[RMDB]
RNA sequence: GGGAACGACUCGAGUAGAGUCGAAAAGUGCUUGAGCACUGUCGUUGCGACGAGAGUUCGAUGCGGAUGUCGAUCCGGAAAGACAUCAUCCGGAAAGCAUUUGCUCUCUUUGUGCUCUUGCACGAAAGGGACUGCGGUGGUUCGCCAUCGUAGUCCCAAAAGAAACAACAACAACAAC
Reactivity to DMS in 0.01 (KOAc 150mM, MgCl2 10mM, bicine 150mM(pH8.5), 24C), signal-to-noise 5, nucleotides 027 to 126: g000u000g000c000u000u010g000a020g000c010a000c010u030g000u000c010g020u020u040g040c070g010a030c010g010a030g000a010g000u020u030c200g000a060u050g020c030g000g000a020u010g000u030c030g000a260u000c010c020g000g010a030a070a090g000a120c240a100u050c170a140u000c010c010g000g000a030a140a300g000c000a020u010u000u020g000c010u010c030u010c000u010u000u030g010u000g010c000u000c030u000u000g010c020a010c000g020a030a080a080
Reactivity to 2A3 in 0.01 (KOAc 150mM, MgCl2 10mM, bicine 150mM(pH8.5), 24C), signal-to-noise 9, nucleotides 027 to 126: g000u000g000c000u000u000g000a000g000c000a010c030u040g020u020c050g180u190u300g170c160g020a010c010g010a000g010a010g030u100u260c100g020a070u120g010c000g000g010a020u020g070u240c050g020a060u010c000c000g000g040a080a110a030g150a060c060a130u080c010a030u000c020c000g000g000a020a010a010g000c000a000u000u010u040g000c010u000c000u000c000u070u080u110g000u000g000c000u000c000u000u000g000c000a000c000g000a030a000a000
An RNA of 177 nucleotides, treated with DMS and 2A3 and read out base by base.